Background:
An RNA of 177 nucleotides, treated with DMS and 2A3 and read out base by base. The DMS profile rests on 1,356 reads. The data come from the RNA Mapping Database (RMDB), library OK2TST. The reactions ran in a buffer of 150 mM KOAc, 10 mM MgCl2 and 150 mM bicine (pH 8.5), at 24 C. DMS adducts were read by reverse transcription with MarathonRT. The 2A3 profile rests on 1,273 reads. For 2A3 the reverse transcriptase was SuperScript II with manganese.
[RMDB]
RNA sequence: GGGAACGACUCGAGUAGAGUCGAAAAUCGCCAUUGCAGUUCGGCAUGAUCGGCUGGAAAGACGGAGCGCGCCAGCUCCGUGACCGAUUUCGCUUUGCGUUUGACGUUAGGGCUUUGAUCCAGCGGAGGUGGGAGGAGGAUUCGUCCUCCUCCCACCAAAAGAAACAACAACAACAAC
Reactivity to DMS in 0.01 (KOAc 150mM, MgCl2 10mM, bicine 150mM(pH8.5), 24C), signal-to-noise 2, nucleotides 027 to 126: u000c030g040c010c000a070u000u040g030c070a110g020u000u010c170g020g020c090a060u000g000a060u000c040g020g040c020u000g000g000a090a130a140g030a040c000g000g020a040g000c000g000c180g050c170c160a120g000c000u000c010c010g040u010g000a030c050c000g000a070u000u000u000c080g010c010u000u000u020g030c000g030u000u000u000g000a230c260g000u020u030a080g000g010g010c020u000u020u020g000a170u000c020c040a050g000c090g000g010a100
Reactivity to 2A3 in 0.01 (KOAc 150mM, MgCl2 10mM, bicine 150mM(pH8.5), 24C), signal-to-noise 1, nucleotides 027 to 126: u070c060g020c000c000a090u060u140g040c000a030g060u090u090c050g030g010c020a020u110g020a070u010c030g050g000c030u100g050g110a080a100a000g130a000c020g040g010a050g020c060g000c060g050c040c020a010g000c000u010c030c000g010u000g010a030c000c010g020a000u060u050u100c090g000c070u100u010u090g000c020g070u060u050u150g070a040c000g000u050u150a180g000g010g050c010u050u080u110g100a100u050c030c010a020g020c060g040g040a080